The record gives the reactivity of an RNA of 177 nucleotides to 2A3 and DMS. The RNA was probed in 150 mM KOAc, 10 mM MgCl2 and 150 mM bicine (pH 8.5) at 24 C. For 2A3 the reverse transcriptase was SuperScript II with manganese. For DMS, 2,416 sequencing reads were counted. Source: RMDB library M2PK90, as collected in RNAgym.
[RMDB]
RNA sequence: GGGAACGACUCGAGUAGAGUCGAAAAUAUAGUAUGGAGGAGGCUGGAAGUUAGAAGGACAAUGGAAGGAAGGAGAAGAAGUCCAGGUAUUGGCACUGGAGCCUGGAAAAAAUCCAAGAGCCGUAAAGCUUAUUAAUAGUUUCGACUAUUAAUAAGCAAAAGAAACAACAACAACAAC
Reactivity to 2A3 in 0.01 (KOAc 150mM, MgCl2 10mM, bicine 150mM(pH8.5), 24C), signal-to-noise 1, nucleotides 027 to 126: u130a000u050a020g060u010a090u150g010g020a010g000g000a020g010g000c030u020g010g010a040a020g050u050u110a060g020a030a020g040g010a030c080a090a120u120g040g010a020a030g040g020a040a020g040g030a060g010a060a000g050a040a020g040u000c010c010a000g000g010u050a070u110u170g020g000c000a000c020u000g010g000a010g040c000c030u000g000g000a180a090a030a000a020a000u010c000c000a030a030g030a030g070c000c020g010u030a080a000a020
Reactivity to DMS in 0.01 (KOAc 150mM, MgCl2 10mM, bicine 150mM(pH8.5), 24C), signal-to-noise 3, nucleotides 027 to 126: u010a110u000a090g000u000a110u000g030g000a110g000g000a050g020g020c060u000g000g010a080a080g010u000u000a070g010a080a030g010g010a090c070a050a140u010g010g000a060a070g010g010a110a090g000g000a060g000a090a060g000a090a110g000u000c040c000a010g010g020u000a100u010u000g010g010c030a070c100u000g010g010a050g000c010c010u010g000g000a000a020a040a070a070a070u000c020c030a050a160g000a110g020c020c040g020u020a030a070a090